[RMDB]
RNA sequence: GGGAACGACUCGAGUAGAGUCGAAAACAAAUUGUCUUGCGUAAUUCUAAUGGUGCUUGCAUUUGGAACGCUGCUGCAUAUAUGAAACUCUCGGAUGCACUUAAACGACAGAUUCGCAUUGCAUGCCGGUACGUUUUAAGUUCGCUUAAAACGUACCAAAAGAAACAACAACAACAAC
Reactivity to 2A3 in 0.01 (KOAc 150mM, MgCl2 10mM, bicine 150mM(pH8.5), 24C), signal-to-noise 4, nucleotides 027 to 126: c010a000a040a040u090u080g030u020c010u020u080g010c020g070u110a090a110u130u040c030u070a100a030u110g110g000u060g050c040u050u050g010c010a040u040u020u060g040g020a050a010c030g010c030u030g000c010u030g000c030a000u070a000u020a030u170g070a060a050a060c020u010c020u000c030g000g030a030u030g010c000a010c060u060u140a100a060a010c030g060a010c020a040g010a080u050u050c010g000c040a020u010u030g020c010a020u070g070c040c060
Reactivity to DMS in 0.01 (KOAc 150mM, MgCl2 10mM, bicine 150mM(pH8.5), 24C), signal-to-noise 4, nucleotides 027 to 126: c050a070a100a080u010u020g010u000c060u000u000g010c120g010u000a070a070u010u010c050u000a100a110u010g010g020u010g000c060u000u000g030c030a040u000u000u000g020g010a070a070c100g000c070u000g020c060u000g000c050a060u000a090u010a070u000g010a050a040a080c090u000c080u000c030g010g010a090u000g010c040a050c180u000u010a060a110a120c050g010a030c150a050g000a140u000u000c060g010c020a040u000u000g000c040a060u000g010c050c190
About this RNA: Structure probing data (2A3 and DMS) for a 177-nucleotide construct. 2A3 adducts were read by reverse transcription with SuperScript II with manganese. The 2A3 profile rests on 5,510 reads.